[RMDB]
RNA sequence: GGGAACGACUCGAGUAGAGUCGAAAAAAAAACGCUGGGUACGAGAGUAGGAGGUACACAGCAGCAGCUUACUGAAGCGCGCACGGUAAAGGUGUACUACCCACCCGAUGGUAGUACCUGUGCUGAAGCGCGCACGGCAACCGAAAGGUGCGAAAAAGGACACGUUAUAGUUCGCUAUAACGUGUCCAAAAGAAACAACAACAACAAC
Reactivity to 2A3 in 0.01 (KOAc 150mM, MgCl2 10mM, bicine 150mM(pH8.5), 24C), signal-to-noise 3, nucleotides 027 to 156: a010a000a000a000a000c110g000c030u030g020g000g000u000a010c040g030a060g020a040g300u180a120g080g030a040g000g050u010a000c030a000c000a010g020c020a010g030c030a020g000c020u140u220a080c060u220g110a170a050g000c010g010c000g000c000a000c030g030g000u040a110a060a070g030g010u070g020u100a020c000u000a000c010c020c060a150c050c090c070g140a210u260g000g000u010a000g000u010a010c010c000u030g030u030g020c010u010g040a130a030g000c000g000c010g000c030a000c000g040g000c040a080a100c000c010g010a050a010a020g020g000u060g010c060g150a060a070a050a030a020
Chemical mapping of a 207-nucleotide RNA with 2A3. For 2A3 the reverse transcriptase was SuperScript II with manganese.